[RMDB]
RNA sequence: GGGAACGACUCGAGUAGAGUCGAAAAUGAGAGCUACAAUAAUUAUGUACCCUCAUAUGUUAAACCUGAUAGUGUGUCUACCAGCGAUUUAGGUAGUCUCAUUGAUUGUAAUGCGGCUUCAGUUAACGAACUUGUCACUUCGGUGACAAGAAAAGAAACAACAACAACAAC
Reactivity to DMS in 0.01 (KOAc 150mM, MgCl2 10mM, bicine 150mM(pH8.5), 24C), signal-to-noise 7, nucleotides 027 to 129: u020g000a000g020a070g050c260u020a020c030a020a030u030a110a140u000u040a050u040g020u000a000c060c010c000u000c030a030u000a110u040g030u030u050a070a090a080c000c000u030g030a030u030a000g030u020g020u000g000u000c050u000a030c090c040a080g010c170g030a090u050u020u040a050g020g060u010a040g020u000c030u020c020a080u050u040g000a150u070u000g030u000a060a040u020g020c170g000g020c030u000u000c080a030g040u010u000a060a040c060g020a030a060
Reactivity to 2A3 in 0.01 (KOAc 150mM, MgCl2 10mM, bicine 150mM(pH8.5), 24C), signal-to-noise 8, nucleotides 027 to 129: u020g010a000g000a000g040c060u020a000c030a030a060u200a130a100u290u180a110u170g000u030a030c000c000c000u040c010a030u040a090u140g110u050u120a080a050a050c010c010u030g030a030u010a060g030u060g030u030g010u070c030u020a050c010c000a030g060c080g080a070u040u060u090a080g030g000u010a000g000u000c010u000c020a030u050u040g120a120u090u140g100u250a090a030u060g030c040g020g010c000u040u050c030a050g020u040u080a040a010c020g010a030a010
Structure probing data (DMS and 2A3) for a 170-nucleotide construct. The 2A3 profile rests on 12,702 reads. Source: RMDB library 15KLIB, as collected in RNAgym. For DMS the reverse transcriptase was MarathonRT. For DMS, 28,502 sequencing reads were counted.